[RMDB]
RNA sequence: GGGAACGACUCGAGUAGAGUCGAAAAGAUAUGGAUCAGGUGUAAGGCUAUGAAGUCCCAUCGGAAACGAUGGGAUGGAGCCUACACUGAUCCUAAGUCAAAAUCUUCUGUCUUCGGACAGAAGAAAGUUUAAGUGUGUCUUCGGACACACUUAAACAAAAGAAACAACAACAACAAC
Reactivity to DMS in 0.01 (KOAc 150mM, MgCl2 10mM, bicine 150mM(pH8.5), 24C), signal-to-noise 2, nucleotides 027 to 126: g010a010u000a050u000g010g000a020u000c000a080g000g020u010g040u020a100a060g090g030c000u000a300u030g000a200a260g000u000c000c000c000a000u000c000g010g000a030a010a030c000g020a010u000g010g000g010a020u000g000g010a020g020c000c000u000a010c000a000c000u000g000a000u000c000c000u000a000a040g000u000c010a150a110a150a140u000c000u000u000c010u000g020u000c010u000u000c220g010g010a010c000a010g020a000a010g000a010a040a090
Reactivity to 2A3 in 0.01 (KOAc 150mM, MgCl2 10mM, bicine 150mM(pH8.5), 24C), signal-to-noise 3, nucleotides 027 to 126: g000a000u020a020u050g000g000a010u000c020a030g010g070u090g040u300a300a190g030g000c040u140a300u300g020a000a000g010u000c020c000c000a010u000c000g000g010a020a020a000c010g010a000u010g020g000g000a010u010g000g000a010g000c000c000u000a000c070a010c000u010g000a000u000c000c000u000a000a000g010u000c000a000a010a000a300u020c010u020u000c010u000g020u010c000u010u100c300g140g010a010c020a010g000a010a010g000a020a020a000